[RMDB]
Chemical mapping of a 177-nucleotide RNA with DMS and 2A3. For DMS the reverse transcriptase was MarathonRT.
RNA sequence: GGGAACGACUCGAGUAGAGUCGAAAACACUACUACAGGACCAUCGAGGACCUGCGGGACAAGAUUCUUGGUGCCACCAUUGAGAACGCCAGGAUUGUCCUGCAGAUCAACAAUGCUCAACUGGCUGCACGUCUCUAAAGUUCGCUUUAGAGACGUGAAAAGAAACAACAACAACAAC
Reactivity to DMS in 0.01 (KOAc 150mM, MgCl2 10mM, bicine 150mM(pH8.5), 24C), signal-to-noise 2, nucleotides 027 to 126: c090a080c180u000a040c130u020a120c080a090g000g040a060c120c020a040u000c110g010a080g000g000a050c040c010u000g000c000g040g000g050a000c000a020a050g000a100u020u000c000u000u000g000g000u000g000c050c150a090c060c060a160u000u000g010a120g020a190a150c020g010c000c000a010g000g010a060u000u000g000u000c000c000u000g000c020a000g000a030u000c010a050a080c100a060a000u010g020c070u010c050a060a080c060u000g030g020c030u000g030
Reactivity to 2A3 in 0.01 (KOAc 150mM, MgCl2 10mM, bicine 150mM(pH8.5), 24C), signal-to-noise 2, nucleotides 027 to 126: c020a000c030u240a020c010u060a040c050a040g010g000a020c010c010a020u020c040g060a050g040g100a030c020c000u010g000c000g000g010g010a000c010a000a030g090a300u140u010c020u040u040g020g010u030g010c070c060a120c040c060a210u190u300g070a220g020a260a030c010g000c000c000a010g000g000a010u030u000g000u000c000c000u000g000c010a000g000a000u010c000a020a060c020a060a080u060g030c020u030c080a030a090c090u040g050g010c030u030g020